Annotation: Chemical mapping of a 207-nucleotide RNA with DMS and 2A3. Source: RMDB library RNAMAK, as collected in RNAgym. Values cover nucleotides 27 to 156. 2A3 adducts were read by reverse transcription with SuperScript II with manganese. High 2A3 reactivity points to a flexible backbone, as in loops and unpaired stretches. For DMS the reverse transcriptase was MarathonRT.

RNA sequence: GGGAACGACUCGAGUAGAGUCGAAAACGCUGGGAGGAUGAAAGCGGGUACAGCAAGCUGAAGCGCGCACGGUGAUGACCUGUACACGCUAACCCUCCUGUGCUGAAGCGCGCACGGCAACCGAAAGGUGCGAUACGAGCAGAUUCGUCUGCUCGAACUAAUAGGUCAUGUUCGCAUGACCUAUUAGAAAAGAAACAACAACAACAAC
Reactivity to DMS in 0.01 (KOAc 150mM, MgCl2 10mM, bicine 150mM(pH8.5), 24C), signal-to-noise 2, nucleotides 027 to 156: c070g030c030u000g010g000g010a010g020g000a060u010g010a050a160a110g040c010g020g020g020u000a010c010a040g020c020a040a050g040c000u000g020a050a080g020c000g010c020g020c020a300c020g020g010u010g010a140u000g030a030c300c000u000g000u000a010c010a020c000g010c010u000a050a030c040c020c020u000c020c010u000g020u000g050c000u000g000a110a040g010c000g060c000g030c030a170c030g020g000c040a120a150c010c030g000a050a170a210g000g030u000g010c040g030a160u020a160c010g000a020g030c000a020g000a100u000u000c300g020u020c000u000g000c000u000c000g000a010a070
Reactivity to 2A3 in 0.01 (KOAc 150mM, MgCl2 10mM, bicine 150mM(pH8.5), 24C), signal-to-noise 5, nucleotides 027 to 156: c050g000c020u020g000g010g010a020g000g000a040u100g150a300a250a080g010c000g000g020g000u010a010c000a010g000c050a160a170g020c010u030g010a130a020g010c010g000c000g000c020a020c030g010g000u020g020a300u040g010a010c000c020u010g000u000a000c030a000c000g000c040u090a060a040c000c000c010u000c000c000u020g030u080g000c030u120g020a100a030g000c000g000c000g000c010a010c050g060g020c060a190a190c010c000g040a110a020a020g010g010u040g010c020g030a020u090a240c020g000a000g000c000a000g000a020u060u120c170g110u000c080u000g000c000u010c000g000a030a000